[RMDB]
RNA sequence: GGGAACGACUCGAGUAGAGUCGAAAAACGAUUUUGGAUUGCGCCUUGGUCGUACUUUUUGUACGAUGCGCUUCAUGACCAAGACACCUUCUUCCAUAUCAGCCCUGAUUGACGAGUGGGAAACCAUUGGCGAAUUCGCCGCCGAUGUCGGCUGCGGUGGGUGCUAUUAAUUCGUUAAUAGCACCCAAAAAGAAACAACAACAACAAC
Reactivity to 2A3 in 0.01 (KOAc 150mM, MgCl2 10mM, bicine 150mM(pH8.5), 24C), signal-to-noise 2, nucleotides 027 to 156: a000c020g030a000u020u050u060u070g060g000a090u080u110g030c000g010c020c040u080u210g180g000u010c010g030u050a040c020u120u270u210u250u300g000u000a000c010g040a030u020g010c030g000c030u070u130c110a080u150g060a040c080c000a010a000g050a000c020a060c000c000u050u020c000u060u010c010c040a040u110a060u240c020a060g030c030c000c020u060g080a050u070u050g100a100c020g000a020g030u050g000g070g040a000a000a060c000c000a020u010u120g020g000c060g030a070a070u050u140c020g010c040c000g000c010c000g200a180u200g230u300c020g010g000c000u000g000c040g000g080
Reactivity to DMS in 0.01 (KOAc 150mM, MgCl2 10mM, bicine 150mM(pH8.5), 24C), signal-to-noise 2, nucleotides 027 to 156: a090c050g000a100u000u000u000u000g040g000a090u000u010g000c080g050c040c140u010u000g000g030u000c000g040u010a010c010u000u000u000u020u000g030u010a080c030g010a090u000g010c100g020c030u000u000c020a080u010g000a160c030c020a020a050g020a000c020a040c040c090u000u000c040u000u040c010c030a070u000a100u010c070a090g010c050c000c010u030g010a070u000u000g020a140c040g010a120g000u010g020g030g000a060a090a060c050c010a100u000u000g050g010c020g020a120a270u000u000c060g020c010c020g030c000c000g000a100u000g020u010c040g040g010c010u000g000c030g000g050